[RMDB]
Structure probing data (DMS and 2A3) for a 177-nucleotide construct.
Reactivities are given for positions 27 through 126.
For DMS the reverse transcriptase was MarathonRT.
The 2A3 profile rests on 19,512 reads.
RNA sequence: GGGAACGACUCGAGUAGAGUCGAAAAGAUAUGGAACAUUAGGCUAGCUGCGUCGGAAACGACCAGCUUGGACCCUAUGUUCCUAAGUCAAAAGAUAUGAAUCUUUCUUCGGAAAGAUUCAUAUCAAGUUAAUUGAGAUGUUCGCAUCUCAAUUAACAAAAGAAACAACAACAACAAC
Reactivity to DMS in 0.01 (KOAc 150mM, MgCl2 10mM, bicine 150mM(pH8.5), 24C), signal-to-noise 7, nucleotides 027 to 126: g010a030u000a300u000g000g010a010a020c000a010u000u000a100g000g010c030u000a020g010c000u000g000c260g020u000c010g010g010a080a100a140c000g000a010c010c000a010g000c010u000u010g020g000a130c120c010c030u000a010u000g010u000u000c000c000u000a010a070g010u000c040a120a080a130a140g000a010u000a000u000g000a010a000u000c000u000u000u000c000u000u020c210g020g000a010a000a020g000a000u000u000c000a000u000a000u000c000a050a080
Reactivity to 2A3 in 0.01 (KOAc 150mM, MgCl2 10mM, bicine 150mM(pH8.5), 24C), signal-to-noise 4, nucleotides 027 to 126: g020a010u080a040u160g010g000a000a020c010a000u060u130a060g000g020c020u010a000g010c010u040g120c150g050u000c010g010g020a060a040a040c010g000a010c010c010a010g000c010u000u060g010g060a110c010c010c000u000a000u010g000u000u000c010c000u010a080a010g050u020c040a070a010a040a140g010a000u010a000u000g010a010a010u000c000u010u010u010c010u030u110c300g090g000a000a000a000g000a000u000u010c000a000u000a000u000c000a000a010